[RMDB]
RNA sequence: GGGAACGACUCGAGUAGAGUCGAAAAUUAAAGAUCGCUUUGACGAGCCAACAAUGGAAGAGCCAACACGUGAUUUAGCUACGCAUAGUUACUAACUUAAGACAGUUCUGCUUUGCUAUGGAUACACUCUCAUCGUUACCUUCGGGUAACGAUGAGAAAAAGAAACAACAACAACAAC
Reactivity to 2A3 in 0.01 (KOAc 150mM, MgCl2 10mM, bicine 150mM(pH8.5), 24C), signal-to-noise 2, nucleotides 027 to 126: u110u030a020a000a030g020a250u010c010g000c130u220u030u110g000a070c000g030a000g020c000c000a060a060c070a210a160u070g140g000a130a000g030a060g120c040c000a030a000c080a000c170g060u040g140a190u050u050u060a020g020c000u010a010c100g050c050a050u070a040g000u010u090a060c000u000a140a000c000u100u110a090a070g130a090c090a010g000u000u090c010u000g050c020u000u020u020g010c000u000a060u090g080g000a000u010a090c030a000c080
Reactivity to DMS in 0.01 (KOAc 150mM, MgCl2 10mM, bicine 150mM(pH8.5), 24C), signal-to-noise 1, nucleotides 027 to 126: u080u080a030a060a000g040a060u000c060g010c100u050u180u020g000a000c070g030a080g030c040c050a120a100c040a020a100u210g000g000a030a000g000a050g000c000c130a090a060c070a040c020g000u040g000a060u070u000u040a000g010c010u000a050c080g000c090a090u050a040g030u000u000a040c000u000a040a040c070u020u050a000a010g040a050c070a090g000u040u000c000u030g000c040u000u000u000g000c110u000a080u000g000g000a060u040a020c110a060c090

An RNA of 177 nucleotides, treated with 2A3 and DMS and read out base by base. The reactions ran in a buffer of 150 mM KOAc, 10 mM MgCl2 and 150 mM bicine (pH 8.5), at 24 C. Reactivities are given for positions 27 through 126. DMS adducts were read by reverse transcription with MarathonRT. The 2A3 profile rests on 823 reads. It was measured as part of the RMDB library RFM100. 2A3 adducts were read by reverse transcription with SuperScript II with manganese.